[RMDB]
RNA sequence: GGGAACGACUCGAGUAGAGUCGAAAAUGAUAACUGCAGCCCUACUAAUACACUCUAAAGAAAAUUUACUGUUGCAGUGACAGUGAAUUCCAAAAAGCUCAUUGCCAUAUAUAUAAUUUUUAUCUUCUUCUACACAUUGUAAAGCACAGACACAAGGCUAGUACUCCAUUUUCGAAUGGAGUACUAGAAAAGAAACAACAACAACAAC
Reactivity to 2A3 in 0.01 (KOAc 150mM, MgCl2 10mM, bicine 150mM(pH8.5), 24C), signal-to-noise 2, nucleotides 027 to 156: u050g030a010u070a130a050c010u090g020c010a050g020c020c010c010u040a070c040u060a040a170u180a090c050a030c050u040c070u180a070a150a090g100a040a080a090a060u100u030u040a000c020u020g010u030u020g010c050a040g040u020g020a000c010a000g010u000g020a020a020u050u090c030c030a080a070a040a110a050g070c070u060c050a050u020u040g010c000c020a020u040a020u070a010u070a080u080a300a300u250u170u160u150u300a270u040c050u160u030c030u150u000c040u030a070c020a010c010a120u080u120g050u130a040a040a000g000c030a020c020a140g060a080c050a010c010a120a000g100g020
The data come from the RNA Mapping Database (RMDB), library OK3TST.
Chemical mapping of a 207-nucleotide RNA with 2A3.
The reactions ran in a buffer of 150 mM KOAc, 10 mM MgCl2 and 150 mM bicine (pH 8.5), at 24 C.
For 2A3, 584 sequencing reads were counted.
Reactivities are rounded to 0.1 and cut off at 0 and 3.